[RMDB]
RNA sequence: GGGAACGACUCGAGUAGAGUCGAAAAGAUAUGUUGAACAUUCCAGUGGAUGUGAAUUACGUUUAUUGGACCCGAGAGUUGAUGUCUCUUCAAGAUCACCAGAGAAGGCAGACGCUACGAUUGCUUGGACUUUUGAUCUCGGAACAUGUCAAAUACCGUGUAGUUUUCACUUCGGUGAAAACUACACAAAAGAAACAACAACAACAAC
Reactivity to 2A3 in 0.01 (KOAc 150mM, MgCl2 10mM, bicine 150mM(pH8.5), 24C), signal-to-noise 1, nucleotides 027 to 156: g010a010u020a000u030g010u050u050g050a140a040c020a200u080u070c000c010a010g010u000g000g020a040u020g010u030g040a150a200u220u210a140c000g010u050u030u000a000u070u020g010g000a040c030c010c050g050a010g000a000g050u130u140g040a060u180g010u020c030u000c000u100u020c040a010a040g010a300u120c040a050c060c000a040g010a020g000a190a050g020g000c030a060g040a200c040g050c100u130a020c060g110a080u070u120g020c060u090u110g090g020a110c020u030u070u000u090g110a060u000c010u000c050g000g000a010a010c020a000u020g000u040c040a000a060a170u120a020c050c020